[RMDB]
RNA sequence: GGGAACGACUCGAGUAGAGUCGAAAAAAGAAACCAGUCUUAUAGGGUCUGGUAGAACUGAUUCAGGAGUUCAUGCUAUUGGUCAGAUUGCAAAUUUUAAAAUUAAUUCAGGUAUAAGUAUAGAAAGCAGUAAUGCUGCUUUCGAGCAGCAUUACUGAAAAGAAACAACAACAACAAC
Reactivity to DMS in 0.01 (KOAc 150mM, MgCl2 10mM, bicine 150mM(pH8.5), 24C), signal-to-noise 2, nucleotides 027 to 126: a040a030g000a120a060a020c020c000a020g010u000c020u000u030a130u040a140g030g020g000u000c000u000g000g000u000a010g000a100a060c040u010g020a070u010u020c090a100g000g000a030g000u010u050c110a040u010g000c040u000a070u050u000g000g020u010c050a090g000a070u010u020g020c040a040a030a120u020u000u050u030a000a070a060a080u030u000a040a070u030u000c060a020g010g000u020a080u000a010a100g010u020a150u050a120g020a080a050a090g000
Reactivity to 2A3 in 0.01 (KOAc 150mM, MgCl2 10mM, bicine 150mM(pH8.5), 24C), signal-to-noise 3, nucleotides 027 to 126: a000a000g140a000a020a000c000c000a020g000u000c030u140u300a290u140a300g210g000g040u020c040u030g000g000u030a060g030a030a040c020u040g020a170u170u120c080a060g010g010a000g090u050u080c010a040u180g040c020u040a050u030u070g100g000u060c060a040g080a140u040u050g030c020a000a010a060u080u070u120u260a170a170a110a060u140u150a060a030u110u030c010a000g000g050u070a110u030a210a130g020u010a050u050a300g240a020a060a000g030